[RMDB]
RNA sequence: GGGAACGACUCGAGUAGAGUCGAAAAUAUAUAUAGAAAUGCCCAAGUGCUGGCCAAGGUGACUGUCAUUGGCUUCGUGCAGCAUCAGUUAAUCUUUGAAUUGUUGCGGGGGUUCAUCUGAAGGCUACAGCACAUAUUGGUUCGCCAAUAUGUGCUGAAAAGAAACAACAACAACAAC
Reactivity to DMS in 0.01 (KOAc 150mM, MgCl2 10mM, bicine 150mM(pH8.5), 24C), signal-to-noise 1, nucleotides 027 to 126: u000a070u000a090u010a290u010a110g000a080a080a060u020g000c010c000c000a140a080g020u000g000c120u000g000g010c080c030a150a050g010g060u000g010a080c090u000g000u000c050a110u030u000g030g000c010u000u000c090g050u000g050c050a050g000c000a030u030c050a080g000u000u000a070a080u010c050u000u000u010g000a020a080u000u000g000u000u000g010c000g000g010g000g000g000u000u000c100a020u020c020u000g000a140a110g010g040c050u000a050
An RNA of 177 nucleotides, treated with DMS and read out base by base. It was measured as part of the RMDB library OK2TRN. Conditions: 150 mM KOAc, 10 mM MgCl2 and 150 mM bicine (pH 8.5), 24 C.